An RNA of 177 nucleotides, treated with 2A3 and DMS and read out base by base. For 2A3, 3,479 sequencing reads were counted. Values are in units of 0.01, from 0 to 300, in steps of 10. The RNA was probed in 150 mM KOAc, 10 mM MgCl2 and 150 mM bicine (pH 8.5) at 24 C.
[RMDB]
RNA sequence: GGGAACGACUCGAGUAGAGUCGAAAAUACGAACGCUGGCGGCGUGCUUAACACAUACAAGUCGAACGAUGAAGCCCUUCGGGAUGGAUUAGUGGCGAACGGGAGAGUAACACGUGGGCAAUCUGCCAAAAUAAUAUAAAUUCGUUUAUAUUAUUUUAAAAGAAACAACAACAACAAC
Reactivity to 2A3 in 0.01 (KOAc 150mM, MgCl2 10mM, bicine 150mM(pH8.5), 24C), signal-to-noise 4, nucleotides 027 to 126: u170a030c040g030a060a020c020g010c030u020g040g000c020g010g010c010g010u030g010c010u070u090a150a020c020a000c010a010u150a030c030a060a020g070u040c000g020a050a030c020g050a070u090g060a040a030g030c000c010c000u010u050c050g050g000g010a040u070g030g000a030u110u110a080g030u080g050g010c010g020a040a020c020g000g020g000a060g010a000g030u030a050a040c040a010c110g040u070g000g020g000c010a000a070u030c040u060g010c010c010
Reactivity to DMS in 0.01 (KOAc 150mM, MgCl2 10mM, bicine 150mM(pH8.5), 24C), signal-to-noise 7, nucleotides 027 to 126: u050a090c080g020a080a060c130g020c050u010g010g010c050g010g010c040g010u010g000c020u020u020a070a100c090a100c080a010u020a080c120a080a090g010u000c030g010a130a100c070g010a080u010g000a200a190g000c030c020c010u000u020c090g020g000g020a060u010g000g010a100u020u010a050g010u020g000g000c030g010a080a080c080g000g000g010a110g000a070g010u010a060a070c110a070c080g010u020g000g000g000c050a080a090u020c060u010g010c150c040